[RMDB]
RNA sequence: GGGAACGACUCGAGUAGAGUCGAAAAGUGUUCAAGGGCAACGCCAAGACCGUCAACGAGUUCGCCGCGACGGCUGCCGACAAGCUGGGACUGUCCGGCAGCGCUUACCAGCAAAUGGCAUCGGUGACAAACGUAACGGAUUCGUCCGUUACGUUUGAAAAGAAACAACAACAACAAC
Reactivity to 2A3 in 0.01 (KOAc 150mM, MgCl2 10mM, bicine 150mM(pH8.5), 24C), signal-to-noise 4, nucleotides 027 to 126: g050u070g040u070u060c050a070a090g060g030g050c020a090a020c030g020c010c010a030a020g080a060c010c030g020u050c010a040a040c030g010a020g100u090u060c040g020c010c010g030c030g030a050c050g080g000c020u010g000c000c010g010a010c020a060a030g010c060u190g080g070g140a160c010u030g020u060c060c040g020g000c000a000g010c020g000c010u020u080a070c010c010a010g040c040a040a080a190u130g040g000c000a040u050c030g030g020u030g020a020
Reactivity to DMS in 0.01 (KOAc 150mM, MgCl2 10mM, bicine 150mM(pH8.5), 24C), signal-to-noise 6, nucleotides 027 to 126: g010u010g020u010u000c070a080a140g010g010g020c040a080a050c120g020c030c020a090a160g010a090c050c040g010u000c040a070a130c120g000a070g010u000u000c090g010c020c020g010c130g010a050c120g010g010c030u000g000c000c000g000a030c050a050a100g030c040u010g010g000g010a170c140u010g010u010c050c060g010g000c010a010g010c030g010c080u000u000a100c090c060a070g000c070a050a070a120u000g000g010c040a070u000c040g000g020u000g010a150

Structure probing data (2A3 and DMS) for a 177-nucleotide construct.
Conditions: 150 mM KOAc, 10 mM MgCl2 and 150 mM bicine (pH 8.5), 24 C.
For 2A3, 5,594 sequencing reads were counted.
For 2A3 the reverse transcriptase was SuperScript II with manganese.